The data come from the RNA Mapping Database (RMDB), libraries RFM100 and RFMREP. Chemical mapping of a 177-nucleotide RNA with 2A3 and DMS. Conditions: 150 mM KOAc, 10 mM MgCl2 and 150 mM bicine (pH 8.5), 24 C. High 2A3 reactivity points to a flexible backbone, as in loops and unpaired stretches.

RNA sequence: GGGAACGACUCGAGUAGAGUCGAAAAACAACAACCCGGGGUGACCCGCGGGCAAGUGCAACAGAAAGUAAACCGCCUAGAAUUUUUCUAGGUAAGGGUGAAACGGUGCGGUAAGAGCGCACCAGCGCCAAUCAUUUGAUUUCGAUCAAAUGAUUGGAAAAGAAACAACAACAACAAC
Reactivity to 2A3 in 0.01 (KOAc 150mM, MgCl2 10mM, bicine 150mM(pH8.5), 24C), signal-to-noise 8, nucleotides 027 to 126: a000c030a010a010c010a020a050c000c000c010g000g020g000g010u110g100a200c020c000c010g070c120g020g010g020c070a150a080g070u090g120c040a110a060c010a100g050a020a040a000g100u240a020a010a010c000c000g000c000c010u000a030g020a170a150u170u210u140u100u030c000u000a000g000g000u000a000a000g000g000g000u020g000a020a000a020c020g000g000u010g000c000g010g010u030a020a010g000a010g060c000g000c000a000c000c000a010g020c030g000
Reactivity to DMS in 0.01 (KOAc 150mM, MgCl2 10mM, bicine 150mM(pH8.5), 24C), signal-to-noise 5, nucleotides 027 to 126: a130c020a070a110c050a120a160c010c020c000g030g000g010g020u030g000a180c070c010c020g000c180g000g010g010c120a060a120g010u000g010c170a140a090c070a020g000a010a020a040g000u030a000a020a010c010c000g000c000c000u000a000g030a000a110u020u010u040u010u000c000u000a000g000g010u000a010a010g000g000g000u000g000a080a050a040c160g000g000u000g010c000g000g010u010a020a020g000a300g000c010g000c000a000c000c000a040g000c280g000